[RMDB]
RNA sequence: GGGAACGACUCGAGUAGAGUCGAAAACGUAAAGGGCGAGCUUUUGUCCGGAAUGGUUCCGCAGUGAUCGGGCCAUGCAAUAGUUGCCAACGACAACUAUGCUCCGGUUGCUCAGGCAGCGUAACGCACAAUGGAACAACCUUCGGGUUGUUCCAAACUAGAUAUCGGGAUUCGUCCCGAUAUCUAGAAAAGAAACAACAACAACAAC
Reactivity to 2A3 in 0.01 (KOAc 150mM, MgCl2 10mM, bicine 150mM(pH8.5), 24C), signal-to-noise 5, nucleotides 027 to 156: c010g020u050a030a030a120g080g040g020c060g010a060g030c050u110u100u100u130g050u060c020c020g010g020a060a060u060g020g010u270u300c010c030g000c080a130g070u100g130a180u140c030g000g010g020c030c020a020u060g010c010a050a250u000a020g010u010u000g020c020c080a120a050c120g070a090c020a000a000c000u000a000u010g000c010u010c010c000g010g000u030u060g010c010u010c020a020g060g010c010a020g000c030g070u090a050a030c050g030c040a040c040a060a220u090g000g000a000a000c010a000a000c010c000u040u070c200g050g000g010u000u010g000u010u000c000c000a000a000a000
Reactivity to DMS in 0.01 (KOAc 150mM, MgCl2 10mM, bicine 150mM(pH8.5), 24C), signal-to-noise 2, nucleotides 027 to 156: c040g010u010a010a080a160g000g010g010c010g020a080g050c110u010u000u000u030g040u000c040c010g040g010a170a080u000g020g000u000u010c000c030g010c040a130g040u020g000a090u000c030g000g000g000c030c000a060u000g030c020a100a110u010a030g030u000u000g010c000c000a100a160c190g010a130c010a010a030c010u000a030u000g000c040u000c070c040g010g000u000u000g020c000u000c100a140g030g010c040a070g000c040g020u000a090a130c070g000c070a090c070a110a160u000g000g010a020a000c010a020a010c000c000u000u010c300g050g030g030u000u000g000u000u000c010c000a000a000a080

This 207-nucleotide RNA was probed chemically with 2A3 and DMS. High DMS reactivity at an A or C suggests that its Watson-Crick edge is free. Values are in units of 0.01, from 0 to 300, in steps of 10.